[RMDB]
RNA sequence: GGGAACGACUCGAGUAGAGUCGAAAAAAUUCGAGGACCAGAUGGAACUCCGCUUCCAACUGAUGCUUCAGGAGCUGUUAUUGGACCAGAUGGAGAACCAAUUCCAACUGAUGCCAGUGGUAAGCCGUAUGCAUUACGUCUUCGGACGUAAUGCAUAAAAAGAAACAACAACAACAAC
Reactivity to DMS in 0.01 (KOAc 150mM, MgCl2 10mM, bicine 150mM(pH8.5), 24C), signal-to-noise 3, nucleotides 027 to 126: a030a100u000u010c050g010a030g000g010a100c040c010a030g000a090u000g000g000a020a050c020u010c180c210g020c170u010u010c020c000a020a100c030u000g040a090u010g000c020u000u000c090a150g010g010a130g040c040u010g000u010u000a030u010u000g010g000a070c080c000a010g010a080u010g010g000a030g010a070a120c200c240a070a100u010u000c010c000a020a070c010u000g000a070u000g030c000c010a040g010u000g020g000u010a050a030g020c030c020g010
Reactivity to 2A3 in 0.01 (KOAc 150mM, MgCl2 10mM, bicine 150mM(pH8.5), 24C), signal-to-noise 2, nucleotides 027 to 126: a010a000u230u090c100g000a040g030g010a090c040c000a000g000a030u050g030g010a010a000c020u060c270c080g030c130u010u000c000c000a040a030c010u020g000a050u180g040c000u040u090c040a030g040g100a070g030c020u010g060u090u010a000u000u020g060g040a090c040c000a020g070a180u090g030g020a070g000a100a080c090c020a030a090u050u000c000c000a020a020c020u020g010a020u270g110c000c000a000g020u010g110g030u070a070a070g010c010c020g020